This 177-nucleotide RNA was probed chemically with DMS and 2A3.
[RMDB]
RNA sequence: GGGAACGACUCGAGUAGAGUCGAAAACUCGUCCAUCACGGCUCGCCCAAUCAGGCCAGCCGUGGCCGCCGACCCUACAGGGUUGCGCCGGCCUCCGGGUUGCACACCGCCCAGAAGGUGGAGUGAGUAUCAAUGUCUUUUUCGAAAGACAUUGAUAAAAAGAAACAACAACAACAAC
Reactivity to DMS in 0.01 (KOAc 150mM, MgCl2 10mM, bicine 150mM(pH8.5), 24C), signal-to-noise 9, nucleotides 027 to 126: c010u000c010g000u000c010c010a020u000c000a040c010g010g010c010u000c300g010c000c000c070a080a150u070c300a130g000g010c000c070a010g010c000c010g020u000g000g000c000c010g010c040c000g000a010c000c000c000u040a130c300a230g000g000g010u000u000g010c120g020c070c030g020g010c000c000u000c010c030g000g000g010u000u020g020c100a080c150a110c110c080g000c000c000c000a050g000a050a080g000g010u000g000g000a040g010u020g010a030g010
Reactivity to 2A3 in 0.01 (KOAc 150mM, MgCl2 10mM, bicine 150mM(pH8.5), 24C), signal-to-noise 9, nucleotides 027 to 126: c000u010c000g050u020c000c000a010u010c010a000c000g000g000c000u000c010g010c000c010c000a070a280u210c100a040g000g000c010c020a000g000c000c000g000u000g000g000c000c000g010c000c000g000a010c000c000c010u110a160c150a230g000g000g020u010u020g040c130g020c100c060g000g000c000c000u000c010c010g020g000g000u030u090g020c040a030c000a030c040c030g000c000c000c000a040g030a110a020g000g000u010g000g000a030g090u140g020a010g030

Overview: The reactions ran in a buffer of 150 mM KOAc, 10 mM MgCl2 and 150 mM bicine (pH 8.5), at 24 C. 2A3 adducts were read by reverse transcription with SuperScript II with manganese. Source: RMDB libraries RFM100 and RFMREP, as collected in RNAgym.